[RMDB]
RNA sequence: GGGAACGACUCGAGUAGAGUCGAAAAUCAUGCCUGUUCGCAGGCAUGAAAAUAAAUUCAGCGGUAAUUGCUCCGCAAAUAAUACCGCUGAUGCGGAGCAAAAAACAUGAAUCUUCGGAUUCAUGAACAUAUAGAGUUGCUUCGGCAACUCUAUAUGAAAAGAAACAACAACAACAAC
Reactivity to 2A3 in 0.01 (KOAc 150mM, MgCl2 10mM, bicine 150mM(pH8.5), 24C), signal-to-noise 2, nucleotides 027 to 126: u010c000a000u000g000c010c000u030g010u060u070c260g000c110a000g000g040c000a000u000g000a000a000a000a000u060a000a050a060u140u070c020a030g010c010g000g050u100a160a190u090u050g010c000u010c010c010g000c030a000a000a010u090a020a010u050a040c000c000g000c020u020g000a010u020g010c000g020g020a010g010c020a050a070a000a010a000a000c000a000u000g010a000a020u010c030u060u070c260g080g000a010u010u000c000a000u000g000a020a010
Reactivity to DMS in 0.01 (KOAc 150mM, MgCl2 10mM, bicine 150mM(pH8.5), 24C), signal-to-noise 2, nucleotides 027 to 126: u000c000a000u000g020c000c000u000g010u000u010c200g030c000a020g000g030c000a010u000g000a010a030a060a080u000a050a030a130u010u000c040a050g000c010g000g000u010a090a140u000u000g010c000u000c020c030g010c010a020a120a040u010a050a090u010a170c000c020g000c020u000g000a050u000g000c010g010g010a030g000c000a000a040a100a060a020a070c000a000u000g000a030a010u000c000u000u000c170g050g000a000u000u000c000a000u000g000a080a130